[RMDB]
The record gives the reactivity of an RNA of 177 nucleotides to DMS and 2A3. DMS adducts were read by reverse transcription with MarathonRT. The 2A3 profile rests on 1,152 reads. The DMS profile rests on 1,040 reads.
RNA sequence: GGGAACGACUCGAGUAGAGUCGAAAAAGCCAUCAAAAUUAAUACAGCCAGGUCCAUUACCACCAUGAGCAUUUAUAACUUUAAUAUUAGUUAAAGUAACCCCUGAUGCUUGUAUAUUAAAUAAUUACAUAGCGACUAUAUUCGUAUAGUCGCUAUGAAAAGAAACAACAACAACAAC
Reactivity to DMS in 0.01 (KOAc 150mM, MgCl2 10mM, bicine 150mM(pH8.5), 24C), signal-to-noise 1, nucleotides 027 to 126: a130g020c000c000a030u010c090a050a100a060a070u070u000a070a070u040a070c130a120g010c040c000a050g000g000u030c040c030a120u000u020a050c020c080a070c060c060a060u030g020a120g030c000a010u010u010u090a000u000a080a090c000u000u000u000a000a000u000a220u090u020a040g000u000u000a000a000a000g000u000a180a140c040c020c000c060u000g000a110u000g000c030u010u000g000u010a000u070a050u050u000a040a060a060u040a120a130u030u020a080
Reactivity to 2A3 in 0.01 (KOAc 150mM, MgCl2 10mM, bicine 150mM(pH8.5), 24C), signal-to-noise 3, nucleotides 027 to 126: a000g100c050c010a010u100c080a060a110a150a040u220u260a040a050u100a120c000a000g010c000c000a000g030g020u010c000c000a020u020u070a050c010c040a060c000c020a110u130g000a020g000c000a000u020u110u020a150u190a110a070c000u000u000u030a100a030u120a300u200u190a080g030u000u010a010a030a010g000u050a080a090c020c000c020c030u030g010a040u070g010c030u060u040g060u020a050u000a010u120u220a040a160a070u200a030a020u070u020a020